RNA sequence: GGGAACGACUCGAGUAGAGUCGAAAAGUAUGGAUGCCACCGUGACGGCUCAAUCACACAAGUGCCAACGAUAACGAGGCGCUCGCUAUUGCUGCGUAACUGAUGGCCUGACGGUCUGACGUUACAAAAAACGAAAAGUGGUUCGCCACUUUUCGAACAUUGUAAUGUACUUCGGUACAUUACAAUGAAAAGAAACAACAACAACAAC
Reactivity to 2A3 in 0.01 (KOAc 150mM, MgCl2 10mM, bicine 150mM(pH8.5), 24C), signal-to-noise 9, nucleotides 027 to 156: g090u070a060u180g050g050a060u090g030c040c020a040c030c050g040u050g050a060c070g030g000c020u030c090a060a110u100c020a030c020a020c020a150a060g020u020g030c010c010a100a060c100g070a120u110a220a050c070g020a070g060g010c030g020c030u030c020g020c030u070a070u160u270g040c070u080g010c040g030u010a020a010c010u010g020a010u020g010g010c000c020u120g090a050c100g000g000u000c010u010g010a010c020g010u020u030a020c020a000a040a000a000a000a010c010g000a000a000a000a000g000u000g020g010u030u040c100g070c060c000a000c000u000u000u000u000c000g000a030a000
Reactivity to DMS in 0.01 (KOAc 150mM, MgCl2 10mM, bicine 150mM(pH8.5), 24C), signal-to-noise 6, nucleotides 027 to 156: g010u000a080u000g010g000a090u000g010c000c010a100c040c070g020u000g010a140c080g010g030c030u000c050a100a090u010c050a070c060a090c060a050a080g060u010g020c030c000a060a130c070g000a140u000a070a130c060g000a220g020g010c040g040c020u000c000g010c030u000a040u000u000g010c000u000g000c040g010u000a020a030c010u000g010a230u000g010g020c000c010u000g030a170c270g050g030u000c010u000g010a300c300g000u010u000a040c030a000a040a040a060a090a100c020g000a020a010a000a000g030u000g000g010u000u010c300g000c020c000a010c000u000u000u000u000c000g010a050a120